[RMDB]
RNA sequence: GGGAACGACUCGAGUAGAGUCGAAAAGUAUAGCAUGACUGGCGAUGCGUAUACGAUGAAUCAGCCAGCAAAGAAUCCGUUGUGCGAAAGCACUUCGGUAAUGCAUAAUCGGUUCGAGUACAGCCCGCUACGAGAACCGUUGUUAGUACGGGCAAGACAGGUGACUAUAUUUCGAUAUAGUCACCUGAAAAGAAACAACAACAACAAC
Reactivity to DMS in 0.01 (KOAc 150mM, MgCl2 10mM, bicine 150mM(pH8.5), 24C), signal-to-noise 2, nucleotides 027 to 156: g050u000a110u010a130g010c040a060u010g020a030c020u010g000g020c020g020a060u000g000c020g030u010a060u010a100c090g020a150u010g000a120a040u000c030a100g020c000c010a040g000c040a030a150a140g000a260a210u000c000c010g060u000u000g010u000g020c000g010a130a100a270g020c010a010c000u000u010c000g060g020u000a010a040u000g060c060a100u000a100a070u000c020g020g000u000u000c010g000a300g000u000a040c040a050g010c020c000c000g020c110u010a030c040g020a300g010a020a020c020c010g040u010u000g000u000u000a100g020u000a110c050g000g030g020c020a140a150g000a170
Reactivity to 2A3 in 0.01 (KOAc 150mM, MgCl2 10mM, bicine 150mM(pH8.5), 24C), signal-to-noise 1, nucleotides 027 to 156: g040u050a020u140a130g010c020a010u090g100a220c010u000g050g000c050g000a020u010g030c030g090u080a050u020a110c190g050a090u290g110a030a100u070c020a040g010c020c010a000g000c020a120a120a010g130a030a050u030c000c000g000u000u000g000u020g000c000g040a010a020a000g010c000a000c000u000u000c000g030g010u020a040a020u050g030c070a060u040a120a120u240c060g020g000u010u030c010g010a020g000u020a020c010a060g020c020c010c010g010c040u020a010c010g010a020g010a060a010c010c000g000u000u030g020u000u010a040g010u030a020c040g040g000g000c060a020a020g100a040